[RMDB]
RNA sequence: GGGAACGACUCGAGUAGAGUCGAAAAGAUAUGGAAGUAGUUGCGACAUGUGCACCCGGCUCGGAAACGAGCCCGGCGGCACAACAGCGCACUACUUCCUAAGUCAAAAGGUUAGUUCGCUAACCAAGGAGUUAUACAAGUUCGCUUGUAUAACUCCAAAAGAAACAACAACAACAAC
Reactivity to 2A3 in 0.01 (KOAc 150mM, MgCl2 10mM, bicine 150mM(pH8.5), 24C), signal-to-noise 3, nucleotides 027 to 126: g010a020u090a040u150g000g000a000a000g010u010a010g020u270u250g010c010g030a120c130a180u180g020u000g020c010a230c000c000c000g020g000c010u010c010g040g040a160a080a090c000g000a010g030c030c000c000g000g010c140g060g000c010a010c000a010a010c040a020g010c000g020c000a000c000u000a000c010u000u000c000c000u000a000a010g020u000c020a050a070a070a160g000g000u000u010a010g020u060u090c300g030c170u010a000a000c000c000a010a110
Reactivity to DMS in 0.01 (KOAc 150mM, MgCl2 10mM, bicine 150mM(pH8.5), 24C), signal-to-noise 3, nucleotides 027 to 126: g000a050u020a300u010g000g010a000a010g000u000a010g000u000u000g030c000g020a070c110a200u000g030u000g020c020a230c040c030c180g010g010c000u020c000g000g010a060a070a200c010g030a010g000c010c020c150g000g000c150g000g010c000a000c010a010a060c220a170g020c000g010c000a020c000u000a010c000u000u010c000c010u000a000a080g000u000c030a090a100a180a090g000g000u000u010a010g010u000u000c280g010c020u000a000a010c000c010a120a120